This 177-nucleotide RNA was probed chemically with DMS and 2A3. Reactivities are given for positions 27 through 126. The RNA was probed in 150 mM KOAc, 10 mM MgCl2 and 150 mM bicine (pH 8.5) at 24 C. 2A3 adducts were read by reverse transcription with SuperScript II with manganese.
[RMDB]
RNA sequence: GGGAACGACUCGAGUAGAGUCGAAAAUGCGCGGAUAAAUCGACGGAUUGAAAAGCGGCGAUAUUGCUAACCGCCUGACGCGCAUUCUCAAUUAGCGACAAAACUGCCAUAUCUUCGGAUAUGGCAGCUAUCUCCCCUACUUCGGUAGGGGAGAUAGAAAAGAAACAACAACAACAAC
Reactivity to DMS in 0.01 (KOAc 150mM, MgCl2 10mM, bicine 150mM(pH8.5), 24C), signal-to-noise 3, nucleotides 027 to 126: u000g020c030g020c000g030g000a010u000a030a000a020u000c000g020a230c300g000g000a030u000u020g000a030a000a230a300g010c000g020g010c040g000a100u000a110u000u010g000c010u000a090a110c000c010g000c000c020u000g000a020c000g000c010g020c010a050u000u000c010u000c020a120a110u000u010a020g000c000g020a060c300a070a020a140a190c020u000g000c000c000a020u000a000u000c000u000u010c180g010g020a010u000a000u000g000g000c000a000g020
Reactivity to 2A3 in 0.01 (KOAc 150mM, MgCl2 10mM, bicine 150mM(pH8.5), 24C), signal-to-noise 2, nucleotides 027 to 126: u020g000c000g000c010g020g000a010u020a050a000a000u010c030g080a260c160g200g010a020u000u020g020a000a010a000a020g010c010g020g000c030g050a080u070a110u250u140g000c000u030a010a000c010c010g000c000c000u010g000a000c000g000c000g000c020a000u080u030c020u000c010a030a230u110u110a040g030c010g110a120c090a020a120a010a040c000u010g010c000c010a010u020a010u000c030u040u060c210g090g000a000u010a010u000g040g040c000a000g010